[RMDB]
RNA sequence: GGGAACGACUCGAGUAGAGUCGAAAAGAAAGCAUGCUGUGGUCACCAGGCAGCCAUUAUGGCGGCAUACCUCCAUCCGAAACGUACGCCGGCUAACGGUACGUGGAUGGGAAAGCAUGCAGCCAUCCGAAACGUACGUUAUGGCCUCUCUGAAGCCACUGUAAGGAGUUUUCGAACUCCUUACAGUAAAAGAAACAACAACAACAAC
Reactivity to 2A3 in 0.01 (KOAc 150mM, MgCl2 10mM, bicine 150mM(pH8.5), 24C), signal-to-noise 3, nucleotides 027 to 156: g040a020a100a010g000c030a000u050g060c040u000g070u170g050g000u070c040a110c190c040a110g090g000c030a030g010c040c000a080u160u150a110u300g010g000c020g000g030c010a040u080a050c010c000u050c010c000a010u000c030c010g100a170a080a010c010g020u040a010c080g050c100c060g030g000c040u130a260a060c030g000g000u010a000c030g000u020g010g000a010u010g000g010g050a100a030a020g030c030a000u000g000c020a000g010c000c000a040u070c050c020g050a110a080a090c060g070u230a030c030g050u110u090a060u050g010g000c040c010u060c000u000c030u140g080a100a000g010c020c070
Reactivity to DMS in 0.01 (KOAc 150mM, MgCl2 10mM, bicine 150mM(pH8.5), 24C), signal-to-noise 2, nucleotides 027 to 156: g000a080a070a160g010c070a010u000g000c000u140g000u000g020g000u020c100a110c080c160a130g010g000c030a080g020c020c100a190u000u000a190u000g060g010c000g000g000c000a230u000a040c040c020u020c020c000a060u000c040c030g000a070a150a110c020g010u000a010c030g050c010c030g050g030c090u010a080a100c050g060g010u000a010c010g070u010g010g020a060u000g010g030g000a030a060a060g000c010a050u020g010c000a070g010c060c010a030u000c160c020g020a070a120a130c050g070u000a080c090g010u010u000a030u010g000g010c000c030u030c000u010c040u000g020a090a030g000c040c000